Description:
The data come from the RNA Mapping Database (RMDB), library OK2TRN. This 177-nucleotide RNA was probed chemically with 2A3 and DMS. The RNA was probed in 150 mM KOAc, 10 mM MgCl2 and 150 mM bicine (pH 8.5) at 24 C. For 2A3 the reverse transcriptase was SuperScript II with manganese.
RNA sequence: GGGAACGACUCGAGUAGAGUCGAAAAGCGGCGGCGGCGGCGGCGUCGAAGGCGCUGCAGCGCGUGGGCAGCGGCGCCAGCGCGGUGAUGGACGCGGCCGAGCCUGGCGCCGAGGCGGACUCGGGCGCCUAAGUUUACGUUUCGACGUAAACUUAGGAAAAGAAACAACAACAACAAC
Reactivity to 2A3 in 0.01 (KOAc 150mM, MgCl2 10mM, bicine 150mM(pH8.5), 24C), signal-to-noise 3, nucleotides 027 to 126: g060c020g050g000c020g030g040c020g020g010c000g030g030c020g040g020c010g000u030c040g080a110a070g040g000c020g000c020u010g010c020a050g020c050g000c050g060u130g010g110g010c050a040g050c000g030g000c010g000c000c000a010g000c050g000c040g030g120u100g060a130u180g080g040a020c040g000c020g080g000c000c000g010a020g010c020c010u030g020g030c000g000c000c000g000a010g010g000c040g030g020a030c020u020c020g010g050g030c030g020
Reactivity to DMS in 0.01 (KOAc 150mM, MgCl2 10mM, bicine 150mM(pH8.5), 24C), signal-to-noise 5, nucleotides 027 to 126: g020c040g000g010c030g010g010c030g010g000c020g000g020c020g000g020c020g030u000c030g010a120a110g000g010c000g010c010u000g010c080a080g030c020g010c100g020u000g000g010g020c040a090g020c020g000g000c010g000c020c000a040g000c040g010c010g010g010u000g000a130u000g000g000a080c030g020c040g010g010c010c010g010a120g000c030c030u000g010g010c010g020c010c010g000a030g000g000c110g010g000a120c040u000c020g000g010g000c060g010